[RMDB]
Source information: Structure probing data (DMS and 2A3) for a 207-nucleotide construct. The DMS profile rests on 5,258 reads. It was measured as part of the RMDB library OK3TST. DMS adducts were read by reverse transcription with MarathonRT.

RNA sequence: GGGAACGACUCGAGUAGAGUCGAAAAGCUCCGCCUCGCUCGGCGGGGUCGUAGCCGACACGUCGCAUUUCUCCGGUGAGCCAUGCAGCGAAUGAGGGUGUAGGGCGGCUUGUCAUGCGCAGACUUUAUCGCGCGCGAGAUACGAGCCGACAGGGGAUCAUUACCAUACAUUCGUGUAUGGUAAUGAAAAAGAAACAACAACAACAAC
Reactivity to DMS in 0.01 (KOAc 150mM, MgCl2 10mM, bicine 150mM(pH8.5), 24C), signal-to-noise 2, nucleotides 027 to 156: g000c010u000c010c050g030c000c000u010c110g070c140u010c090g020g040c000g020g010g010g020u000c040g030u000a130g000c060c000g020a130c060a060c040g000u000c050g020c040a090u000u000u010c040u010c030c050g040g030u000g010a080g030c050c050a080u010g020c070a070g020c040g000a080a080u000g010a210g010g000g000u010g010u000a110g000g020g010c020g030g000c030u000u000g000u020c000a190u000g010c000g050c000a190g000a050c070u010u000u010a190u010c050g010c110g040c010g010c040g010a120g010a170u000a060c000g010a010g020c000c010g010a040c050a080g010g010g010g000a260
Reactivity to 2A3 in 0.01 (KOAc 150mM, MgCl2 10mM, bicine 150mM(pH8.5), 24C), signal-to-noise 4, nucleotides 027 to 156: g000c000u000c010c000g000c000c000u050c060g120c060u130c130g080g000c000g000g020g000g000u020c030g040u060a040g060c040c010g030a040c020a020c090g060u090c020g000c100a070u030u140u040c050u000c030c030g100g020u100g040a020g000c000c020a090u140g030c080a040g010c010g060a090a050u150g020a130g040g010g030u090g040u100a060g040g040g030c000g000g000c000u010u020g020u030c020a060u200g000c010g000c030a010g040a130c000u150u260u110a190u260c050g000c000g000c000g000c020g090a080g020a030u110a070c030g010a010g010c000c010g010a020c020a030g020g010g010g020a010

The RNA was probed in 150 mM KOAc, 10 mM MgCl2 and 150 mM bicine (pH 8.5) at 24 C.
For 2A3, 3,046 sequencing reads were counted.
2A3 adducts were read by reverse transcription with SuperScript II with manganese.